Source: RMDB library OK3TST, as collected in RNAgym. This 207-nucleotide RNA was probed chemically with 2A3. Values are in units of 0.01, from 0 to 300, in steps of 10. For 2A3, 850 sequencing reads were counted. The reactions ran in a buffer of 150 mM KOAc, 10 mM MgCl2 and 150 mM bicine (pH 8.5), at 24 C.
[RMDB]
RNA sequence: GGGAACGACUCGAGUAGAGUCGAAAAGUGAUCGACGCUAUCGUCCAGGCGCUCACCGGCACCUUGAACAUCGGCCACACGAUCGAAGACCUGAUCUUCUCGCUGACCAACAUCCGCCCCGGCGCGAUCGGAGGUGUGCUCGGUGGUGGGUCGAUCGGCCUAGGUAGUGGUUCGCCACUACCUAGGCAAAAGAAACAACAACAACAAC
Reactivity to 2A3 in 0.01 (KOAc 150mM, MgCl2 10mM, bicine 150mM(pH8.5), 24C), signal-to-noise 2, nucleotides 027 to 156: g160u100g030a020u040c030g010a010c060g060c240u080a080u190c050g070u030c000c030a030g030g020c000g000c020u060c020a100c000c040g000g000c000a030c000c000u010u070g060a100a020c010a020u050c020g060g000c050c000a030c010a010c000g060a070u070c000g020a060a030g080a100c010c060u100g050a250u040c000u030u000c010u020c000g020c040u040g080a100c000c050a120a110c090a130u060c020c020g040c100c000c000c010g070g050c100g000c030g090a060u000c000g020g000a050g020g080u010g050u070g050c040u040c070g000g000u000g010g030u050g000g010g000u030c000g000a010u000c000g000